RNA sequence: GGGAACGACUCGAGUAGAGUCGAAAAUGGUGUGCUUAUUGGGGAUGAAUGAUGGUGUUUACCCACGAACACUACCGCCGUUAGGUUUUGAUUUGAUGGCUAAACAGGUUCGGCGCGGUGACCGUAGAGAGCCUCAUGUUUUCGAACAUGAGGCUCUAAAAGAAACAACAACAACAAC
Reactivity to DMS in 0.01 (KOAc 150mM, MgCl2 10mM, bicine 150mM(pH8.5), 24C), signal-to-noise 1, nucleotides 027 to 126: u000g000g030u000g000u000g010c070u020u000a100u000u020g000g020g000g000a080u040g010a120a090u010g000a100u000g000g020u000g010u010u000u000a140c060c010c010a080c040g010a020a040c030a040c010u000a050c130c160g010c070c050g030u000u010a080g000g000u000u000u000u000g020a100u000u000u000g020a070u000g010g030c080u010a050a030a050c130a060g000g010u000u010c010g020g030c070g030c170g030g000u010g000a100c030c010g000u000a110g000

An RNA of 177 nucleotides, treated with DMS and read out base by base. For DMS the reverse transcriptase was MarathonRT. The RNA was probed in 150 mM KOAc, 10 mM MgCl2 and 150 mM bicine (pH 8.5) at 24 C. The data come from the RNA Mapping Database (RMDB), library OK2TST.